[RMDB]
RNA sequence: GGGAACGACUCGAGUAGAGUCGAAAAAAAGAUAUGGAUGACGGACAAGAGAGCUUGGAUUUAUAAGGCAAACAUUCGGAAACGAAUGGUAGCCUUAUUGUCAGCUCUACCGUCAUCCUAAGUCAAACAUAUUAUGCAGGUUCGCCUGCAUAAUAUGAAAAGAAACAACAACAACAAC
Reactivity to DMS in 0.01 (KOAc 150mM, MgCl2 10mM, bicine 150mM(pH8.5), 24C), signal-to-noise 9, nucleotides 027 to 126: a070a070a080g010a030u000a300u010g010g000a010u000g000a010c010g010g010a250c240a130a170g000a020g000a020g010c010u000u020g020g010a030u000u010u000a010u000a010a000g000g010c000a050a120a260c010a010u000u000c000g010g000a110a100a210c000g010a010a010u000g000g000u000a300g010c000c000u000u000a000u000u010g010u000c000a040g010c000u000c000u000a050c000c010g000u010c000a000u000c000c000u000a010a080g010u000c020a140a090a240
Reactivity to 2A3 in 0.01 (KOAc 150mM, MgCl2 10mM, bicine 150mM(pH8.5), 24C), signal-to-noise 5, nucleotides 027 to 126: a000a000a000g100a050u120a060u140g010g010a010u010g000a000c010g030g030a060c160a300a150g090a010g000a000g300c030u150u170g120g000a020u020u300u010a030u040a000a000g020g000c020a190a300a040c000a030u010u010c010g020g030a100a070a060c010g000a000a010u010g000g010u010a000g000c000c010u000u000a000u000u000g000u000c000a000g000c000u000c000u010a020c000c010g000u000c000a000u010c000c000u000a010a010g030u010c020a010a150a000